[RMDB]
RNA sequence: GGGAACGACUCGAGUAGAGUCGAAAAAGGAAGCGCGGGCUAAGUUCGUGCCAGCAGCCGCGGUAAUACGAACUGCGCGAACGUUAUUCGGAUUCACUGGGCUUAAAGGGUGCGUAGGCGGCCUGUUUCAACAUUGCCUAUUCGUAGGCAAUGUUGAAAAAGAAACAACAACAACAAC
Reactivity to DMS in 0.01 (KOAc 150mM, MgCl2 10mM, bicine 150mM(pH8.5), 24C), signal-to-noise 2, nucleotides 027 to 126: a020g000g000a130a050g010c110g020c080g040g000g000c070u010a050a300g040u000u000c020g000u060g000c070c000a060g000c060a050g040c120c030g000c050g000g000u010a040a020u040a010c010g070a010a000c090u010g020c000g000c150g000a100a030c010g000u000u020a090u000u000c110g000g000a060u000u000c040a020c000u000g000g010g000c040u020u050a070a180a250g000g010g050u020g040c040g000u010a060g010g020c280g000g000c000c050u020g000u000u020
Reactivity to 2A3 in 0.01 (KOAc 150mM, MgCl2 10mM, bicine 150mM(pH8.5), 24C), signal-to-noise 2, nucleotides 027 to 126: a000g130g010a070a020g060c020g000c000g020g010g020c020u010a040a020g060u010u030c010g020u020g010c010c000a050g030c050a000g000c020c030g110c020g050g000u030a020a040u050a040c010g000a030a020c030u030g000c090g020c100g120a160a040c010g010u000u080a030u030u050c020g030g010a000u020u010c030a020c040u040g020g000g000c000u040u110a110a070a050g110g000g000u030g000c000g020u020a040g000g050c000g000g020c000c000u040g020u000u020

The record gives the reactivity of an RNA of 177 nucleotides to DMS and 2A3. In probing experiments dimethyl sulfate is read out at A N1 and C N3, which are open when not base-paired. For 2A3, 2,940 sequencing reads were counted. The reactions ran in a buffer of 150 mM KOAc, 10 mM MgCl2 and 150 mM bicine (pH 8.5), at 24 C. For DMS the reverse transcriptase was MarathonRT. It was measured as part of the RMDB library RFM100.